[RMDB]
RNA sequence: GGGAACGACUCGAGUAGAGUCGAAAAAGGAAUUAGGAGGGGCGCCACCGACCGCGGUCGGGGGAAGGUCUGAGGUCAUUUUCCGUGAGGGAGGCGCGCCAACGCGUGCAGCAGUCGCACCAGAAACCCCACUCCCCUAAUUCGUUAGGGGAGUGGGAAAAGAAACAACAACAACAAC
Reactivity to 2A3 in 0.01 (KOAc 150mM, MgCl2 10mM, bicine 150mM(pH8.5), 24C), signal-to-noise 2, nucleotides 027 to 126: a000g100g010a030a040u130u080a120g040g010a090g000g040g030g000c040g010c000c000a040c000c020g010a050c000c000g080c070g110g010u030c000g000g030g000g040g020a000a050g040g010u030c050u010g030a030g040g010u020c040a070u050u050u040u000c000c060g020u090g020a100g000g100g000a030g030g020c000g020c000g000c010c010a010a050c060g000c010g000u050g000c000a010g020c000a010g140u110c060g010c010a030c000c000a010g050a060a060a060c050
Reactivity to DMS in 0.01 (KOAc 150mM, MgCl2 10mM, bicine 150mM(pH8.5), 24C), signal-to-noise 1, nucleotides 027 to 126: a140g000g030a090a070u010u030a080g000g010a150g000g010g010g000c050g050c060c050a050c010c000g000a030c030c010g020c230g010g000u000c080g030g000g000g010g000a010a010g010g000u010c040u030g000a070g000g030u040c000a170u030u000u000u000c090c050g010u080g000a140g000g000g000a080g000g010c110g020c060g000c010c070a030a010c100g000c070g040u000g020c000a100g000c030a000g000u000c030g000c040a030c070c040a010g010a070a170a100c130